[RMDB]
An RNA of 207 nucleotides, treated with 2A3 and DMS and read out base by base. Values are in units of 0.01, from 0 to 300, in steps of 10. As a SHAPE reagent, 2A3 marks flexible, mostly unpaired nucleotides at the ribose 2'-OH. For 2A3, 4,042 sequencing reads were counted. For 2A3 the reverse transcriptase was SuperScript II with manganese. For DMS the reverse transcriptase was MarathonRT.
RNA sequence: GGGAACGACUCGAGUAGAGUCGAAAAUACAUUACACAUCAGACACAACAACAGCUUUCUCAUCAGUUACACACAUUUGUCGAGACGUAAAUUACGGAUGAGUUAUUCGCUAUCUACAUGCAAACGGAGCAUCCAUAUUCUUUAUUUGCCUAUUCAUUAUGUUCAGAUACUUCGGUAUCUGAACAUAAAAAGAAACAACAACAACAAC
Reactivity to 2A3 in 0.01 (KOAc 150mM, MgCl2 10mM, bicine 150mM(pH8.5), 24C), signal-to-noise 6, nucleotides 027 to 156: u080a010c030a030u080u140a050c050a000c010a070u050c020a050g090a070c030a010c010a140a070c010a050a020c020a070g010c030u020u070u020c020u020c000a050u000c000a020g030u050u100a030c040a000c000a000c030a100u060u090u170g080u140c060g020a030g040a090c050g030u060a030a120a100u150u090a020c040g040g030a020u010g000a000g030u050u050a100u080u100c040g000c040u020a030u070c030u060a050c020a050u070g050c010a000a050a080c040g040g000a020g020c010a030u020c010c000a080u050a110u140u030c050u000u160u070a130u050u080u070g040c000c020u050a080u070u060c030a030u030
Reactivity to DMS in 0.01 (KOAc 150mM, MgCl2 10mM, bicine 150mM(pH8.5), 24C), signal-to-noise 2, nucleotides 027 to 156: u010a030c040a110u000u010a100c030a160c050a060u000c040a080g000a140c040a110c020a050a060c070a060a100c050a060g010c050u000u010u000c030u000c010a080u000c020a060g040u000u030a050c060a120c120a160c060a140u010u000u010g030u010c040g010a060g000a090c060g010u010a030a050a090u000u000a050c010g000g000a040u010g000a100g010u010u010a040u000u010c040g000c050u000a300u000c010u000a050c060a090u000g030c050a070a080a080c050g030g010a110g020c070a060u010c040c070a050u010a090u000u020c070u010u000u000a080u030u000u000g010c020c110u000a130u000u020c040a170u010